This 177-nucleotide RNA was probed chemically with DMS and 2A3. The 2A3 profile rests on 628 reads. The reactions ran in a buffer of 150 mM KOAc, 10 mM MgCl2 and 150 mM bicine (pH 8.5), at 24 C. For DMS, 918 sequencing reads were counted. Reactivities are given for positions 27 through 126. For 2A3 the reverse transcriptase was SuperScript II with manganese.
RNA sequence: GGGAACGACUCGAGUAGAGUCGAAAAUCGAGGCGCCCAAAAUGAUCGGGGCUCAAGUUCGCCACCGAGACCUAACGGCACGGGUAACACCGUGAUCCAGUAGGUUGGCAUUCUGUUCGGGUGGAAGGCUUUCCUCGAGGUUCGCCUCGAGGAAAGCAAAAGAAACAACAACAACAAC
Reactivity to DMS in 0.01 (KOAc 150mM, MgCl2 10mM, bicine 150mM(pH8.5), 24C), signal-to-noise 1, nucleotides 027 to 126: u050c010g000a030g000g000c040g040c200c000c000a060a070a040a080u030g010a300u000c040g010g020g000g000c150u000c110a080a000g040u000u110c160g000c020c000a000c050c030g000a140g000a030c000c000u000a000a010c000g000g070c000a000c000g000g000g000u020a060a100c300a300c020c040g030u010g000a030u110c000c000a040g010u000a000g000g000u000u000g010g000c200a010u010u070c170u000g050u010u010c100g000g000g000u010g000g000a260a000g050
Reactivity to 2A3 in 0.01 (KOAc 150mM, MgCl2 10mM, bicine 150mM(pH8.5), 24C), signal-to-noise 1, nucleotides 027 to 126: u160c000g030a020g000g020c080g110c030c000c000a000a000a190a000u240g060a120u020c120g020g000g000g010c010u040c020a040a060g060u080u090c120g000c080c010a110c000c000g090a020g000a000c000c000u040a060a020c010g000g000c000a000c000g000g000g000u000a010a000c000a000c000c000g000u000g000a010u050c000c040a010g020u000a000g020g000u000u010g070g030c030a010u110u000c060u070g070u060u060c020g070g000g000u010g040g010a070a040g050